[RMDB]
RNA sequence: GGGAACGACUCGAGUAGAGUCGAAAAAAUAUGCUCGACAGGCUGCCUGUCCGACAGAGCUUUUAGAUCUUCUGAUCUUUGCCUGCAGCAUAUCGCUUAUGCAUCAAGCGAUUGUCGGAUCACACAAGCUAACGGAUUACUUCGGUAAUCCGUUAGCAAAAGAAACAACAACAACAAC
Reactivity to DMS in 0.01 (KOAc 150mM, MgCl2 10mM, bicine 150mM(pH8.5), 24C), signal-to-noise 1, nucleotides 027 to 126: a060a070u000a030u000g010c020u010c080g010a220c100a030g000g010c010u010g000c050c030u000g010u010c060c050g030a030c050a030g000a150g000c000u000u010u000u000a020g000a030u000c030u000u010c300u020g020a010u000c010u010u000u010g020c030c010u000g030c060a050g000c040a040u000a050u000c030g000c040u000u010a080u000g030c190a120u000c130a000a030g010c000g000a130u010u000g000u000c000g040g000a080u020c100a070c150a040c170a050a050
Conditions: 150 mM KOAc, 10 mM MgCl2 and 150 mM bicine (pH 8.5), 24 C.
The record gives the reactivity of an RNA of 177 nucleotides to DMS.
It was measured as part of the RMDB library M2PK90.
DMS (dimethyl sulfate) methylates the pairing face of unpaired adenines and cytosines.